[RMDB]
RNA sequence: GGGAACGACUCGAGUAGAGUCGAAAAUUAUAGCGGAACUACGGGCCAGGGAAGUCCAAUAUUCAAUUUUAUUAACUGAGUAUUGUCGGGCUAUAUUACGUUAUCUAUAUGCCGGUGCGCGGCGAGGCCCAAGGGAUAAAGGUAAGGGGGUAACGGAAUUCGCUGUUAUAUUCGUAUAACAGCGAAUAAAAGAAACAACAACAACAAC
Reactivity to 2A3 in 0.01 (KOAc 150mM, MgCl2 10mM, bicine 150mM(pH8.5), 24C), signal-to-noise 2, nucleotides 027 to 156: u170u070a120u060a090g030c040g020g010a090a010c010u070a030c090g000g010g000c030c060a030g030g000g030a030a000g010u080c050c000a020a000u030a010u010u010c000a010a030u010u050u190u220a240u230u190a040a050c060u010g000a000g030u010a030u030u020g100u160c110g000g030g000c020u050a040u000a020u170u100a030c020g000u030u060a040u010c070u020a080u040a030u250g020c020c000g000g060u110g050c120g000c000g020g020c000g000a070g000g000c000c000c000a000a000g020g000g000a030u100a070a080a010g060g020u060a030a040g030g010g000g010g050u070a020a000c070g010g000a030
Reactivity to DMS in 0.01 (KOAc 150mM, MgCl2 10mM, bicine 150mM(pH8.5), 24C), signal-to-noise 1, nucleotides 027 to 156: u000u000a110u000a120g010c030g000g000a110a150c090u000a070c120g020g020g030c020c090a130g020g020g000a070a110g010u000c050c000a020a020u000a010u000u000c010a000a000u010u010u010u000a130u020u000a140a010c010u000g010a050g010u000a020u000u010g020u000c050g000g000g000c030u010a080u000a060u000u000a030c040g010u000u010a080u020c090u010a060u010a050u000g000c020c020g050g020u010g020c090g020c050g020g010c010g000a090g010g040c010c010c020a100a100g030g020g000a080u010a000a110a060g010g000u000a030a060g010g000g010g010g000u000a050a050c070g000g010a080